[RMDB]
RNA sequence: GGGAACGACUCGAGUAGAGUCGAAAAAAGUUCUAGCAUACAUGUGCAGAACGUGCAGUUUUGCUACAUAGGUAUACACGUAACAUGGUGGUUUGCUGCACCCAUCAACCUGUCACCUACAUUAGGCCUGUGAUGUGCCAUUCGUGGCACAUCACAGAAAAGAAACAACAACAACAAC
Reactivity to DMS in 0.01 (KOAc 150mM, MgCl2 10mM, bicine 150mM(pH8.5), 24C), signal-to-noise 1, nucleotides 027 to 126: a110a100g000u000u000c010u010a180g030c010a020u000a110c170a100u010g060u000g000c010a030g000a010a020c020g000u000g020c170a050g000u000u010u010u000g010c000u000a030c040a020u010a050g050g020u000a070u010a060c020a020c120g000u010a030a070c080a040u000g000g010u000g000g010u010u000u000g020c060u000g000c060a070c060c060c030a050u000c000a060a140c090c030u000g000u000c040a020c000c000u000a090c110a140u010u000a020g020g010c090
Reactivity to 2A3 in 0.01 (KOAc 150mM, MgCl2 10mM, bicine 150mM(pH8.5), 24C), signal-to-noise 2, nucleotides 027 to 126: a010a000g040u100u000c030u090a130g000c000a020u110a070c080a150u300g020u030g000c000a000g000a030a010c000g030u010g010c020a040g000u090u170u210u100g000c020u010a070c040a050u040a050g150g000u060a090u020a080c100a000c080g100u100a160a020c040a080u120g110g030u020g000g000u040u050u030g000c010u020g000c000a060c000c000c000a060u070c000a000a090c020c090u080g100u130c040a010c040c000u060a050c050a130u080u180a040g050g010c000